[RMDB]
RNA sequence: GGGAACGACUCGAGUAGAGUCGAAAAGAAAAUAAGUUGGCCAAAAGCGUAUGCGUACGCCGCUGGCCAGCGACCGCAAACCGGUCAAUCGUGAAAACAACACUAUUCGCGGCGAUAAUAAAAAAAACAUCCAAUAAAUGUUCGCAUUUAUUGGAUGAAAAGAAACAACAACAACAAC
Reactivity to DMS in 0.01 (KOAc 150mM, MgCl2 10mM, bicine 150mM(pH8.5), 24C), signal-to-noise 3, nucleotides 027 to 126: g010a070a040a060a070u010a110a120g000u010u000g010g000c000c010a020a090a300a030g000c000g010u000a010u010g010c220g010u000a010c020g000c000c010g020c300u000g000g000c000c010a030g000c010g000a040c020c010g010c140a050a050a190c250c020g000g000u000c030a070a050u000c100g010u000g000a040a050a060a090c110a050a130c100a040c080u000a070u010u010c050g000c050g010g010c140g020a050u010a070a070u040a010a000a000a020a060a090a030a150
Reactivity to 2A3 in 0.01 (KOAc 150mM, MgCl2 10mM, bicine 150mM(pH8.5), 24C), signal-to-noise 2, nucleotides 027 to 126: g010a010a070a000a000u240a090a050g000u000u010g000g000c000c010a020a000a010a000g000c000g010u020a020u060g130c210g040u000a000c010g000c030c000g000c010u000g000g000c000c000a000g000c000g000a000c000c000g000c110a050a100a070c050c010g010g030u010c020a000a060u060c010g020u000g060a050a040a040a030c060a040a050c030a030c050u090a110u070u040c030g020c010g040g080c050g040a030u130a150a120u130a120a100a020a020a000a000a000a020